Conditions: 150 mM KOAc, 10 mM MgCl2 and 150 mM bicine (pH 8.5), 24 C. Structure probing data (DMS and 2A3) for a 177-nucleotide construct. For DMS the reverse transcriptase was MarathonRT.
RNA sequence: GGGAACGACUCGAGUAGAGUCGAAAAGAUAUGGACUGCCAGCGAGCUAAGUAUCGGAAACGAUACGUAGCGAUGAGCUGGGUAGUCCUAAGUCAAACAUACUCAACGGUUCGCCGUUGAGUAUGAAUCACAAUGUACAGUUCGCUGUACAUUGUGAAAAAGAAACAACAACAACAAC
Reactivity to DMS in 0.01 (KOAc 150mM, MgCl2 10mM, bicine 150mM(pH8.5), 24C), signal-to-noise 5, nucleotides 027 to 126: g000a000u000a010u010g000g000a010c000u000g000c000c000a030g020c010g000a010g030c000u000a030a050g000u000a000u000c000g010g000a000a010a020c000g010a010u010a000c000g020u000a010g020c000g030a160u010g000a120g010c000u000g000g020g010u000a000g020u000c000c000u000a000a060g000u000c000a190a160a300c010a000u000a000c000u000c000a010a010c000g010g000u010u020c300g040c000c000g010u000u010g000a000g010u000a000u000g000a120a160
Reactivity to 2A3 in 0.01 (KOAc 150mM, MgCl2 10mM, bicine 150mM(pH8.5), 24C), signal-to-noise 5, nucleotides 027 to 126: g000a000u010a000u040g000g000a000c000u000g010c010c000a010g000c010g050a020g020c020u030a130a050g010u000a000u000c000g010g000a000a000a000c000g000a000u000a000c010g050u030a000g010c010g100a240u300g010a000g000c010u070g190g040g030u020a010g000u000c010c000u000a010a000g010u000c000a000a140a000c000a000u000a000c010u000c000a010a000c010g030g130u090u110c300g060c170c000g010u000u010g000a000g000u000a000u000g000a010a070
For 2A3, 28,607 sequencing reads were counted. Reactivities are given for positions 27 through 126.